[RMDB]
RNA sequence: GGGAACGACUCGAGUAGAGUCGAAAAGCAUUAUAGCGCAUCGAUAUCGCGCGAUAUUAAUCGUAGCCGGCAUUAGCGCGCAUGCAUGCCGAUUACGCGCGCGGCUAGCCGAUCGAUCGUAAUGCGCGUCAAGGCGGAUGUUCGCAUCCGCCUUGACAAAAGAAACAACAACAACAAC
Reactivity to 2A3 in 0.01 (KOAc 150mM, MgCl2 10mM, bicine 150mM(pH8.5), 24C), signal-to-noise 1, nucleotides 027 to 126: g000c010a040u080u070a050u120a090g060c040g000c150a000u030c040g000a020u040a000u050c030g030c000g000c000g030a010u040a090u190u170a200a110u150c000g000u000a030g000c000c000g030g000c020a040u070u190a040g010c030g000c080g000c090a030u160g000c010a000u000g020c010c020g040a040u010u020a050c090g010c020g040c040g000c030g000g010c080u040a020g050c110c000g040a000u030c030g000a000u040c000g000u020a010a010u000g010c050g000c020
Reactivity to DMS in 0.01 (KOAc 150mM, MgCl2 10mM, bicine 150mM(pH8.5), 24C), signal-to-noise 1, nucleotides 027 to 126: g000c000a000u000u000a000u000a130g020c060g000c150a000u010c020g020a090u000a070u010c020g050c000g010c000g010a300u000a150u010u000a100a110u000c020g010u000a030g010c020c040g030g000c010a050u000u000a110g010c030g000c160g060c180a100u030g020c090a070u000g000c030c010g040a030u010u000a000c050g010c030g040c020g010c000g010g000c230u000a040g000c100c010g030a010u000c030g030a050u000c070g000u000a010a030u000g010c020g000c120
An RNA of 177 nucleotides, treated with 2A3 and DMS and read out base by base. For DMS, 902 sequencing reads were counted. The data come from the RNA Mapping Database (RMDB), library OK2TRN. Conditions: 150 mM KOAc, 10 mM MgCl2 and 150 mM bicine (pH 8.5), 24 C.